[RMDB]
An RNA of 177 nucleotides, treated with DMS and 2A3 and read out base by base. For 2A3 the reverse transcriptase was SuperScript II with manganese.
RNA sequence: GGGAACGACUCGAGUAGAGUCGAAAAAUGUCAGCAGAAUUACAAUUGCCGGCGGAGAUUUAGGCGCUCCGUGUAAAGCAGUCUCACGCUAAUCUGGCAGACAUGUCAGGGAACCACGAGAUAAAUGCUGAGUGGGAGUGUUCGCACUCCCACUCAGAAAAGAAACAACAACAACAAC
Reactivity to DMS in 0.01 (KOAc 150mM, MgCl2 10mM, bicine 150mM(pH8.5), 24C), signal-to-noise 1, nucleotides 027 to 126: a010u010g000u000c000a010g000c060a070g000a040a070u000u000a140c100a140a210u000u000g000c030c070g040g000c000g000g000a040g000a010u000u000u000a300g000g000c150g070c000u010c060c000g000u010g000u000a000a230a060g000c000a100g000u000c000u000c000a160c160g000c270u120a000a160u000c010u000g000g030c000a010g000a010c300a100u000g000u000c000a010g000g000g000a180a000c300c000a110c260g000a000g000a030u000a090a130a110u000g040
Reactivity to 2A3 in 0.01 (KOAc 150mM, MgCl2 10mM, bicine 150mM(pH8.5), 24C), signal-to-noise 2, nucleotides 027 to 126: a010u070g050u060c000a000g000c000a010g150a080a070u250u000a050c090a060a160u190u000g010c020c010g030g000c000g060g000a060g010a030u090u000u090a160g070g010c050g030c050u030c030c060g010u000g030u130a120a210a000g000c000a010g030u000c000u000c000a080c140g010c000u030a010a030u010c010u000g000g000c000a000g030a150c060a090u030g000u000c000a000g000g020g000a000a030c000c000a000c050g000a030g000a030u130a030a090a020u140g000
High 2A3 reactivity points to a flexible backbone, as in loops and unpaired stretches. Conditions: 150 mM KOAc, 10 mM MgCl2 and 150 mM bicine (pH 8.5), 24 C. DMS adducts were read by reverse transcription with MarathonRT. Reactivities are rounded to 0.1 and cut off at 0 and 3.